[RMDB]
RNA sequence: GGGAACGACUCGAGUAGAGUCGAAAAGAGUUGGACGUACCUCUAGUGUAUCAGUUGUGCCGCUAGGUGCAUUGCUGAGUAGCUACGUGCGGUCGAGAUAAGCGCUGAAAGCAUCUAAGCGCGAAACCUUGUCUAGCAAUUUCGAUUGCUAGACAAGAAAAGAAACAACAACAACAAC
Reactivity to 2A3 in 0.01 (KOAc 150mM, MgCl2 10mM, bicine 150mM(pH8.5), 24C), signal-to-noise 6, nucleotides 027 to 126: g120a010g050u080u130g020g030a010c010g010u010a000c010c000u010c000u010a000g010u000g210u300a030u010c000a010g020u020u020g010u030g000c010c030g100c240u180a110g040g030u090g030c010a010u030u080g010c010u010g010a030g030u100a010g000c010u010a050c150g000u020g000c010g010g030u010c010g010a020g010a050u120a090a030g000c000g000c010u030g060a100a070a020g070c010a010u030c070u120a050a000g010c000g000c010g020a020a000a000c000
Reactivity to DMS in 0.01 (KOAc 150mM, MgCl2 10mM, bicine 150mM(pH8.5), 24C), signal-to-noise 9, nucleotides 027 to 126: g010a130g010u000u010g000g010a060c000g010u000a010c010c010u000c030u000a030g000u000g000u030a300u010c010a000g010u000u010g010u000g010c000c000g000c300u070a100g020g040u010g010c000a020u030u010g000c000u000g000a010g000u030a300g000c000u000a010c230g000u000g000c000g000g000u000c050g000a100g010a120u020a090a170g010c000g020c000u000g010a130a100a140g010c170a080u010c050u000a180a040g000c000g010c000g000a050a080a110c160
This 177-nucleotide RNA was probed chemically with 2A3 and DMS.
For 2A3 the reverse transcriptase was SuperScript II with manganese.
The RNA was probed in 150 mM KOAc, 10 mM MgCl2 and 150 mM bicine (pH 8.5) at 24 C.
It was measured as part of the RMDB libraries RFM100 and RFMREP.
Values are in units of 0.01, from 0 to 300, in steps of 10.